[RMDB]
RNA sequence: GGGAACGACUCGAGUAGAGUCGAAAAAUAACUGGAGAGCAUCACACGCAUUACACGCCCGAUGAAGUAUGGGAAAUAGCAGUACAGACCAACACCAUGCGGAGGGCUUUAUUGUUGGUCGUAGAUACAUGUAUGUGCUUUUCGAAGCACAUACAUGAAAAGAAACAACAACAACAAC
Reactivity to 2A3 in 0.01 (KOAc 150mM, MgCl2 10mM, bicine 150mM(pH8.5), 24C), signal-to-noise 4, nucleotides 027 to 126: a000u090a020a030c020u040g020g030a070g000a000g090c020a030u030c010a020c000a000c060g050c020a030u050u230a080c100a030c120g010c000c000c010g070a190u030g010a010a010g020u020a000u020g020g020g080a110a100a040u160a070g120c120a010g100u090a040c020a040g010a000c000c000a000a010c020a010c030c000a010u010g000c010g010g000a000g000g000g020c000u100u110u020a080u030u060g000u000u020g010g000u000c000g010u030a020g010a020u100a060
Reactivity to DMS in 0.01 (KOAc 150mM, MgCl2 10mM, bicine 150mM(pH8.5), 24C), signal-to-noise 6, nucleotides 027 to 126: a080u000a050a090c060u000g010g010a070g000a080g000c030a040u000c040a060c080a070c080g010c050a070u000u000a080c160a130c210g000c000c010c000g010a100u010g010a150a130g000u000a010u000g000g000g000a050a090a110u010a090g010c160a090g020u010a040c120a150g010a020c000c010a000a010c020a090c020c000a010u000g010c000g000g010a020g000g020g000c040u000u000u000a020u000u000g020u000u000g010g010u000c010g020u000a020g010a160u000a130
Conditions: 150 mM KOAc, 10 mM MgCl2 and 150 mM bicine (pH 8.5), 24 C. The record gives the reactivity of an RNA of 177 nucleotides to 2A3 and DMS. For DMS, 7,323 sequencing reads were counted. Reactivities are given for positions 27 through 126.